[RMDB]
RNA sequence: GGGAACGACUCGAGUAGAGUCGAAAAGCAUCUUGCUUCGGCAAGAUGCAAAUAACGGUCAGUGGUUGCAGCUAGUCGUAAAUGCUAACUGGCCUUACGCUAAAACGAAUGCGUUCGCGCAUUCGAACGUGAUGUCUACGUUCGCGUAGACAUCACGAAAAGAAACAACAACAACAAC
Reactivity to 2A3 in 0.01 (KOAc 150mM, MgCl2 10mM, bicine 150mM(pH8.5), 24C), signal-to-noise 2, nucleotides 027 to 126: g000c000a020u020c030u000u010g000c000u020u060c150g050g030c000a000a000g000a000u000g000c010a000a000a000u010a010a000c010g020g010u000c000a010g000u030g110g200u140u100g060c000a000g000c020u130a040g170u170c080g090u100a030a000a110u060g000c010u040a120a020c000u000g000g000c000c000u010u040a060c030g040c080u110a080a030a030a060c020g000a010a010u010g010c010g010u000u070c260g000c000g000c020a010u010u010c000g010a000a000
Reactivity to DMS in 0.01 (KOAc 150mM, MgCl2 10mM, bicine 150mM(pH8.5), 24C), signal-to-noise 2, nucleotides 027 to 126: g000c000a010u000c010u000u000g000c000u000u010c220g030g000c000a000a010g000a010u010g010c000a020a040a080u010a150a040c260g020g010u000c050a020g030u000g000g000u000u010g000c130a040g020c160u000a070g000u010c140g020u010a050a040a150u030g000c000u000a140a000c040u000g000g000c000c010u010u000a010c090g000c100u000a040a070a060a180c030g010a030a020u000g000c000g000u000u040c220g010c000g000c000a000u000u000c020g010a040a040